Source: RMDB library OK1LIB, as collected in RNAgym. This 177-nucleotide RNA was probed chemically with 2A3 and DMS. 2A3 adducts were read by reverse transcription with SuperScript II with manganese. The DMS profile rests on 12,079 reads. The 2A3 profile rests on 4,303 reads.
RNA sequence: GGGAACGACUCGAGUAGAGUCGAAAACGGUCUCGAUACGUGAACGCCUUAUGAGACUGUUUUGAACGGAAGGAGUCGUAGUACACGUGAAUCGAGACACGGAAGCACAGCUGCAUUCGGAUGAAUGAUCUACUCAACGGUUCGCCGUUGAGUAGAUAAAAGAAACAACAACAACAAC
Reactivity to 2A3 in 0.01 (KOAc 150mM, MgCl2 10mM, bicine 150mM(pH8.5), 24C), signal-to-noise 2, nucleotides 027 to 126: c000g010g000u000c000u000c000g020a000u050a140c020g000u040g040a070a000c020g080c040c010u010u040a050u130g020a020g000a040c000u000g100u020u000u000u090g020a000a000c080g000g090a040a020g050g000a010g010u020c010g000u000a070g080u020a010c010a000c020g010u050g100a020a000u000c000g000a000g000a000c000a000c000g000g000a030a020g030c000a010c010a030g000c000u060g000c000a020u020u010c010g060g040a030u060g020a020a040u030g020
Reactivity to DMS in 0.01 (KOAc 150mM, MgCl2 10mM, bicine 150mM(pH8.5), 24C), signal-to-noise 5, nucleotides 027 to 126: c030g000g000u000c000u000c000g010a000u010a020c010g000u000g000a080a040c040g010c120c090u020u020a090u020g030a150g000a090c010u000g000u010u010u000u010g010a080a090c140g000g000a090a060g010g010a020g000u000c020g000u010a140g000u010a100c000a000c000g010u010g000a060a030u000c000g000a010g000a000c020a070c000g000g000a110a090g010c040a060c080a070g000c030u010g010c020a020u000u010c020g010g000a120u020g010a070a080u000g000